[RMDB]
RNA sequence: GGGAACGACUCGAGUAGAGUCGAAAACGGUCCCCUCCCCGUUUUUCCGCUGUGUCUGCGCCUACGGAACGAACGGUGUUGAGGCCCUGUCCGCCGCUGCGCUGCCACCUACUCUCGCGCCGCUAGGGUAUAGAAGUUCGUUCGCGAACUUCUAUACAAAAGAAACAACAACAACAAC
Reactivity to DMS in 0.01 (KOAc 150mM, MgCl2 10mM, bicine 150mM(pH8.5), 24C), signal-to-noise 2, nucleotides 027 to 126: c130g030g000u000c030c040c020c010u000c000c030c010c010g010u000u000u000u010u010c010c030g030c080u000g000u020g000u010c050u000g030c120g010c060c040u000a100c050g020g000a050a050c200g020a040a060c040g010g000u000g010u000u000g020a110g030g010c040c010c010u010g020u000c030c030g000c040c060g000c030u000g010c070g010c040u000g010c020c030a120c030c020u000a100c050u000c010u000c030g010c040g010c060c040g010c080u000a090g020g000
Reactivity to 2A3 in 0.01 (KOAc 150mM, MgCl2 10mM, bicine 150mM(pH8.5), 24C), signal-to-noise 1, nucleotides 027 to 126: c000g010g080u060c030c020c040c000u000c000c040c010c000g010u000u000u000u000u000c010c020g000c030u050g030u040g040u110c050u050g070c080g030c050c000u040a030c040g000g000a060a030c030g020a040a010c020g020g010u080g050u050u030g070a120g020g050c010c000c020u030g050u040c030c020g060c060c040g010c030u030g000c020g000c020u020g050c010c010a030c030c000u030a030c000u000c010u020c030g040c000g010c000c000g010c060u090a090g170g090

Conditions: 150 mM KOAc, 10 mM MgCl2 and 150 mM bicine (pH 8.5), 24 C. Structure probing data (DMS and 2A3) for a 177-nucleotide construct. For DMS, 3,270 sequencing reads were counted. The 2A3 profile rests on 1,824 reads. Values cover nucleotides 27 to 126.